Conditions: 150 mM KOAc, 10 mM MgCl2 and 150 mM bicine (pH 8.5), 24 C.
Structure probing data (DMS and 2A3) for a 207-nucleotide construct.
Source: RMDB library OK3TST, as collected in RNAgym.
For 2A3, 1,147 sequencing reads were counted.

RNA sequence: GGGAACGACUCGAGUAGAGUCGAAAAGACAUUGCGCAUGCCUUAGCGCUCACCCCAGCGGGGUUGGGGCGUGAGGUACUGGAAGCGUGCUGGUGGCCGGAUGGCGCAGCGUUGCGGCGUGGCCCCUUGCGCGAUGCGGUGGUGGCCUUGGUGACGCAAUCAGGCCAAGAUUCGUCUUGGCCUGAUUAAAAGAAACAACAACAACAAC
Reactivity to DMS in 0.01 (KOAc 150mM, MgCl2 10mM, bicine 150mM(pH8.5), 24C), signal-to-noise 1, nucleotides 027 to 156: g000a070c030a050u000u010g020c080g060c040a170u000g030c100c000u000u010a060g070c030g000c020u000c020a040c040c020c020c010a220g040c170g030g000g050g000u010u000g020g020g020g010c000g000u010g010a070g010g020u000a090c060u010g040g000a130a090g010c050g030u020g030c030u010g000g000u000g040g070c030c070g040g010a140u020g010g040c000g060c000a140g030c060g010u010u000g040c000g020g030c000g040u010g020g010c010c000c010c020u000u000g020c010g000c040g010a060u010g020c080g000g000u000g000g010u000g040g020c010c010u010u000g000g000u010g000a060c040g000c080
Reactivity to 2A3 in 0.01 (KOAc 150mM, MgCl2 10mM, bicine 150mM(pH8.5), 24C), signal-to-noise 2, nucleotides 027 to 156: g050a010c030a010u100u110g010c010g010c000a000u120g000c000c000u040u060a030g020c000g000c020u000c030a040c000c020c000c030a110g150c220g080g010g000g030u030u170g040g000g000g000c000g000u000g020a000g040g020u060a060c050u030g050g040a050a030g030c040g010u040g050c040u040g000g070u050g030g000c020c020g150g020a080u100g010g060c000g000c000a040g060c080g120u090u170g030c030g080g010c060g010u070g020g020c030c000c000c030u080u130g030c030g000c020g040a030u050g010c070g000g020u070g040g050u070g020g020c020c010u040u110g010g020u080g020a050c020g010c040